[RMDB]
This 207-nucleotide RNA was probed chemically with 2A3.
2A3 adducts were read by reverse transcription with SuperScript II with manganese.
Source: RMDB library PDB130, as collected in RNAgym.
The 2A3 profile rests on 1,335 reads.
Values cover nucleotides 27 to 156.
RNA sequence: GGGAACGACUCGAGUAGAGUCGAAAAUCUCUUAGCGAUAUUGCGGCCUAUCACGCCGAUGGCGUGAUAGUUGGCUUUUGGCGCGAUCCAUCCAGCGGUGGUGCCAUACCGUUUGACUUCACUAAGUUUGAUAAGACUAAAUGUCCUAUUCAAGCCGGUUAUUAAUCGGCUUCGGCCGAUUAAUAACAAAAGAAACAACAACAACAAC
Reactivity to 2A3 in 0.01 (KOAc 150mM, MgCl2 10mM, bicine 150mM(pH8.5), 24C), signal-to-noise 3, nucleotides 027 to 156: u000c020u030c000u010u100a030g000c000g030a050u010a090u130u190g010c000g010g080c000c010u000a000u000c010a020c010g000c030c060g270a210u300g010g000c010g000u000g010a000u000a000g010u000u080g050g000c050u180u040u050u110g090g030c010g020c020g080a020u000c010c020a040u050c060c060a020g030c050g050g000u050g030g050u040g000c020c000a040u040a040c000c010g000u010u090u150g060a080c070u100u020c070a020c050u110a050a100g000u010u000u010g050a040u030a030a020g010a010c020u050a130a010a200u230g020u020c000c020u030a100u160u020c000a040a010g020c020c010g070